RNA sequence: GGGAACGACUCGAGUAGAGUCGAAAAAGCGCUACCGAUCACCAAAGCGUCGGACCGAUUGCAGGUUCACGUGACCAGCGUCACCCACGCGAUCCGCCGGCUGGAGGCCGAUGGAUUGGUGCGGCGGCUGGGGUUUAUGUUUCGACAUAAACCCCAGAAAAGAAACAACAACAACAAC
Reactivity to DMS in 0.01 (KOAc 150mM, MgCl2 10mM, bicine 150mM(pH8.5), 24C), signal-to-noise 1, nucleotides 027 to 126: a050g020c170g020c030u040a010c040c000g020a150u010c020a050c030c050a050a080a180g000c000g030u000c290g010g000a070c090c080g000a100u040u010g040c030a100g020g030u000u000c070a100c230g000u010g020a040c010c010a040g040c030g000u000c050a090c030c010c010a070c010g000c040g000a070u000c000c000g030c030c000g000g010c010u000g010g000a240g020g010c000c000g000a030u000g000g000a060u000u000g000g010u000g020c070g000g000c000g030g000
Reactivity to 2A3 in 0.01 (KOAc 150mM, MgCl2 10mM, bicine 150mM(pH8.5), 24C), signal-to-noise 1, nucleotides 027 to 126: a010g150c080g040c000u000a040c030c000g090a120u140c000a010c000c000a000a110a110g010c000g030u030c120g050g000a080c150c080g060a120u170u300g030c080a020g060g000u060u030c120a130c280g110u230g040a050c000c000a020g000c000g040u000c040a070c000c030c010a010c020g050c010g020a010u000c000c000g000c020c020g010g060c010u110g300g110a130g210g110c030c000g000a010u030g020g030a030u000u020g000g000u010g010c080g050g010c010g010g000

Conditions: 150 mM KOAc, 10 mM MgCl2 and 150 mM bicine (pH 8.5), 24 C. This 177-nucleotide RNA was probed chemically with DMS and 2A3. Values cover nucleotides 27 to 126. The data come from the RNA Mapping Database (RMDB), library OK2TRN.